[RMDB]
RNA sequence: GGGAACGACUCGAGUAGAGUCGAAAAUGCCCAGGCAAUGGGUUGACGGUGCGCAUGAAAUGGGUUGACGGUGCACAGGCAACGAGAGGAGGGAAAUCUUAAGCGGAGGUUAACGGGGCCGUUUGCCACUGUUGACAAGCUUCGGCUUGUCAACAGUAAAAGAAACAACAACAACAAC
Reactivity to 2A3 in 0.01 (KOAc 150mM, MgCl2 10mM, bicine 150mM(pH8.5), 24C), signal-to-noise 2, nucleotides 027 to 126: u100g030c010c000c000a000g040g100c000a030a050u050g020g030g030u000u080g010a030c040g050g040u050g010c070g000c040a050u140g070a030a120a110u230g040g020g050u070u090g000a080c000g010g020u010g030c010a000c000a000g030g010c040a090a030c020g020a100g000a010g190g030a060g050g020g020a090a060a000u090c040u110u170a150a000g030c040g010g070a030g000g030u070u060a070a080c060g020g000g010g000c000c000g000u000u030u110g030c000c000
Reactivity to DMS in 0.01 (KOAc 150mM, MgCl2 10mM, bicine 150mM(pH8.5), 24C), signal-to-noise 2, nucleotides 027 to 126: u020g010c000c030c030a160g000g020c070a070a120u000g000g050g000u000u000g000a130c080g030g050u000g010c000g000c030a030u000g020a140a130a120u010g030g040g020u010u010g000a210c180g000g000u010g040c050a020c060a090g000g000c050a040a130c090g000a100g000a040g000g020a110g000g000g000a040a040a120u030c080u000u020a020a080g000c030g000g000a070g000g000u000u030a060a060c150g000g020g020g000c070c090g020u000u030u000g040c040c050
Structure probing data (2A3 and DMS) for a 177-nucleotide construct.
Conditions: 150 mM KOAc, 10 mM MgCl2 and 150 mM bicine (pH 8.5), 24 C.
Values cover nucleotides 27 to 126.
For 2A3 the reverse transcriptase was SuperScript II with manganese.
Values are in units of 0.01, from 0 to 300, in steps of 10.
It was measured as part of the RMDB library OK1LIB.
For DMS, 2,170 sequencing reads were counted.